Background:
This 177-nucleotide RNA was probed chemically with 2A3 and DMS. The data come from the RNA Mapping Database (RMDB), library M2PK50.

RNA sequence: GGGAACGACUCGAGUAGAGUCGAAAAACGGAUAGAUUCGUCUAUCCGUGCAUCUCAUAACAGACAGAGAAAGUCUGCUAAGAUCUCACUUACAUAAAGAGAAGAGAGUCGAGUUCGCUCGACUCAAGGUAACACUGUAAUUCGUUACAGUGUUACCAAAAGAAACAACAACAACAAC
Reactivity to 2A3 in 0.01 (KOAc 150mM, MgCl2 10mM, bicine 150mM(pH8.5), 24C), signal-to-noise 9, nucleotides 027 to 126: a000c000g010g000a000u000a000g010a010u030u040c180g030u000c120u000a000u000c000c000g000u000g000c020a070u000c010u000c020a040u080a110a050c010a000g030a010c000a000g200a010g150a300a170a020g050u010c000u010g030c040u050a040a030g020a110u020c010u010c020a040c030u060u150a100c030a170u260a110a080a010g030a010g010a090a030g120a010g000a000g030u000c000g000a000g000u040u090c180g020c070u000c000g000a000c000u000c000a010a010
Reactivity to DMS in 0.01 (KOAc 150mM, MgCl2 10mM, bicine 150mM(pH8.5), 24C), signal-to-noise 9, nucleotides 027 to 126: a010c000g000g010a010u000a000g000a020u000u010c200g020u000c000u000a000u000c000c000g010u000g000c140a130u000c010u000c010a110u020a090a100c020a010g000a010c010a060g010a190g010a110a150a070g000u000c000u000g020c290u000a020a030g000a020u000c000u000c020a050c070u000u000a060c230a070u010a020a040a050g010a030g000a080a160g010a150g000a010g000u000c000g010a020g010u000u010c200g010c000u000c000g010a010c000u000c000a020a040
For 2A3 the reverse transcriptase was SuperScript II with manganese.